About this RNA: Source: RMDB library OK2TRN, as collected in RNAgym. The record gives the reactivity of an RNA of 177 nucleotides to 2A3 and DMS. The DMS profile rests on 12,191 reads. DMS (dimethyl sulfate) methylates the pairing face of unpaired adenines and cytosines. The 2A3 profile rests on 6,404 reads.

RNA sequence: GGGAACGACUCGAGUAGAGUCGAAAAGUAUUUUGGGGCGAUGAGAGGUGGGUCAUGCCUGUAAUCCGAGCACUUUGGGAGGCUGAGGCAGAUAACUUGGGCCCAGGAGUUCAAGACAAACCUGGGCUGCUUAUUAUGAGUUCGCUCAUAAUAAGCAAAAAGAAACAACAACAACAAC
Reactivity to 2A3 in 0.01 (KOAc 150mM, MgCl2 10mM, bicine 150mM(pH8.5), 24C), signal-to-noise 5, nucleotides 027 to 126: g040u040a190u100u190u120u110g020g000g010g030c100g070a060u130g060a050g020a020g100g040u130g070g020g000u040c020a040u060g020c010c000u030g100u090a040a040u040c010c020g020a020g030c060a040c160u100u150u090g080g010g000a030g040g000c050u030g010a030g020g000c010a010g010a100u050a050a020c030u040u050g050g030g030c000c020c000a000g000g000a030g010u080u160c110a080a030g020a040c040a020a060a020c000c010u000g000g000g000c000
Reactivity to DMS in 0.01 (KOAc 150mM, MgCl2 10mM, bicine 150mM(pH8.5), 24C), signal-to-noise 7, nucleotides 027 to 126: g010u000a110u000u000u010u000g010g010g000g020c080g010a090u000g010a120g010a110g000g010u010g010g000g000u000c090a080u010g010c020c010u000g010u000a100a090u010c050c030g010a190g020c110a070c130u000u000u000g000g000g010a120g000g010c100u000g010a050g010g010c030a050g000a080u000a030a060c080u000u010g010g010g010c010c010c010a010g000g000a090g000u000u000c150a070a090g000a070c140a040a070a070c020c010u000g000g000g010c020